[RMDB]
Record summary:
Conditions: 150 mM KOAc, 10 mM MgCl2 and 150 mM bicine (pH 8.5), 24 C. Structure probing data (DMS and 2A3) for a 177-nucleotide construct. For 2A3, 3,018 sequencing reads were counted. For DMS the reverse transcriptase was MarathonRT. It was measured as part of the RMDB library OK1LIB.

RNA sequence: GGGAACGACUCGAGUAGAGUCGAAAAGAAGCGUAAUCGCAAGUUAGGGAUUGUGGUGAAUAUCAACUGAAGCGCUGACAGAGCGAUCGGCAAUCAAGAAGCUUCCGGCGAACAACGCCUAUAGAAAGGGAUAUAUUUUCUUCGGAAAAUAUAUCCCAAAAGAAACAACAACAACAAC
Reactivity to DMS in 0.01 (KOAc 150mM, MgCl2 10mM, bicine 150mM(pH8.5), 24C), signal-to-noise 3, nucleotides 027 to 126: g000a120a150g000c000g000u070a060a080u000c010g020c020a130a110g010u000u020a140g000g010g040a050u000u040g000u020g050g020u010g000a110a090u010a080u010c120a090a170c030u010g020a070a030g000c040g010c000u000g000a060c190a100g040a160g010c060g010a030u000c100g020g000c060a020a070u020c090a060a050g000a100a130g000c010u000u000c040c090g000g000c030g000a090a130c210a120a110c030g000c000c030u000a050u000a080g000a150a070a080
Reactivity to 2A3 in 0.01 (KOAc 150mM, MgCl2 10mM, bicine 150mM(pH8.5), 24C), signal-to-noise 4, nucleotides 027 to 126: g020a010a000g020c020g010u080a000a030u020c010g010c010a020a010g100u100u090a070g010g020g050a030u000u030g030u030g020g000u040g070a070a040u110a050u220c070a070a100c020u110g040a090a030g110c020g000c050u040g050a070c050a070g160a010g030c020g030a030u030c020g040g020c010a020a060u050c040a050a050g110a050a000g040c000u010u000c080c020g020g000c000g000a030a020c020a030a010c050g020c010c010u120a120u030a110g190a070a050a040